[RMDB]
RNA sequence: GGGAACGACUCGAGUAGAGUCGAAAAGCUGCAUGACACCGGCAAGGCGCAGGCCGUGGCCGACAGCCUGGAUUACACUGCUGGAUCCUACGAACAAUCAGGUGAGGAUGCUGGAGGCAGCAGCCACAAGGGCAUGGAUGUUCGCAUCCAUGCCCUUAAAAGAAACAACAACAACAAC
Reactivity to DMS in 0.01 (KOAc 150mM, MgCl2 10mM, bicine 150mM(pH8.5), 24C), signal-to-noise 1, nucleotides 027 to 126: g000c000u000g010c020a060u000g000a090c080a060c060c030g050g000c070a140a120g010g010c060g000c140a060g010g000c020c050g020u000g020g080c000c030g010a210c120a150g000c010c010u010g000g010a140u010u030a160c150a170c060u000g010c120u000g000g010a090u000c000c010u000a050c130g000a080a040c130a120a160u020c150a010g010g000u000g010a080g000g010a060u000g010c030u000g050g000a230g000g010c020a070g000c010a030g020c000c060a060c250